[RMDB]
RNA sequence: GGGAACGACUCGAGUAGAGUCGAAAAUGAAUAUAUACCUCAUCAGGCAGAAGCAGAAAUAGCUGAGCUAACUGGAGAGUCAUCCAGCAGGUAGUGUUCAGCUGGGUAACCACAUCAGGGUGUGGCUUUCACAGAAGCUGAAGAAAGCCUGAAGCAAUCAUUUAAAUGAGUUCGCUCAUUUAAAUGAAAAAGAAACAACAACAACAAC
Reactivity to DMS in 0.01 (KOAc 150mM, MgCl2 10mM, bicine 150mM(pH8.5), 24C), signal-to-noise 3, nucleotides 027 to 156: u000g010a120a120u000a080u000a170u000a110c020c020u010c030a140u000c020a060g040g050c000a100g040a150a080g030c030a110g010a090a110a130u000a090g010c020u000g000a130g020c040u000a070a070c020u020g000g010a040g000a160g000u000c090a080u000c020c010a000g050c030a070g030g030u010a090g020u000g020u000u010c020a050g000c000u020g000g020g010u000a050a030c010c010a020c020a090u000c060a200g000g050g040u000g050u000g010g010c010u000u000u000c020a090c080a090g020a200a150g020c020u000g010a130a130g000a070a140a150g010c010c020u000g010a030a120g020c090a090a220
Reactivity to 2A3 in 0.01 (KOAc 150mM, MgCl2 10mM, bicine 150mM(pH8.5), 24C), signal-to-noise 3, nucleotides 027 to 156: u070g010a080a010u090a000u040a020u060a220c000c020u080c050a100u000c010a020g030g000c030a030g000a180a020g000c020a010g190a110a090a080u140a040g000c020u030g030a010g000c000u030a030a080c010u020g010g000a010g000a030g070u040c030a040u010c010c020a000g010c020a010g110g060u150a070g050u050g090u130u060c030a010g000c000u000g000g030g020u030a030a020c010c000a010c020a160u140c110a090g100g180g010u030g010u010g020g020c030u050u070u040c100a110c030a110g050a100a000g010c000u020g010a010a020g010a050a060a000g010c000c000u000g000a000a000g020c020a000a090

The record gives the reactivity of an RNA of 207 nucleotides to DMS and 2A3. 2A3 adducts were read by reverse transcription with SuperScript II with manganese. For 2A3, 2,257 sequencing reads were counted. Values are in units of 0.01, from 0 to 300, in steps of 10. 2A3 is a SHAPE reagent: it acylates the 2'-hydroxyl of flexible nucleotides of all four kinds. Conditions: 150 mM KOAc, 10 mM MgCl2 and 150 mM bicine (pH 8.5), 24 C. It was measured as part of the RMDB library OK3TST.